[RMDB]
RNA sequence: GGGAACGACUCGAGUAGAGUCGAAAAUCUAGUAAGUUUGUAAAAUGUCUGGUGAGAUGUGGGAACUUAUUGGAAACAACAAUUUGCUUAAUAGCAUCCUAGUGCCAGCGGAACAACAUCUGGUAACAUCAGUCUCUCUGUUCGCAGAGAGACUGAUAAAAGAAACAACAACAACAAC
Reactivity to 2A3 in 0.01 (KOAc 150mM, MgCl2 10mM, bicine 150mM(pH8.5), 24C), signal-to-noise 4, nucleotides 027 to 126: u020c000u020a000g000u000a060a030g000u000u040u040g250u100a050a080a110a030u040g040u000c000u040g260g160u290g230a070g010a010u020g020u020g070g100g010a020a020c000u010u000a020u010u010g040g070a070a110a010c020a010a000c060a120a130u070u040u150g000c000u070u140a100a000u110a220g000c010a030u030c000c030u040a020g090u010g080c000c010a000g010c040g030g090a090a040c070a060a000c020a110u010c000u000g010g010u040a030a030c030
Reactivity to DMS in 0.01 (KOAc 150mM, MgCl2 10mM, bicine 150mM(pH8.5), 24C), signal-to-noise 2, nucleotides 027 to 126: u000c010u040a000g020u000a000a060g000u000u000u050g030u060a080a030a090a060u030g000u000c000u020g040g030u070g040a010g030a020u010g040u010g000g030g020a010a010c000u000u000a000u030u000g010g010a110a180a120c180a100a090c190a150a130u080u050u000g020c000u000u000a130a130u010a070g030c020a050u000c040c000u000a110g000u040g000c000c000a030g000c230g040g070a150a120c170a040a050c150a070u000c040u010g010g000u030a050a080c170

An RNA of 177 nucleotides, treated with 2A3 and DMS and read out base by base. For 2A3, 1,875 sequencing reads were counted. Source: RMDB library RFM100, as collected in RNAgym.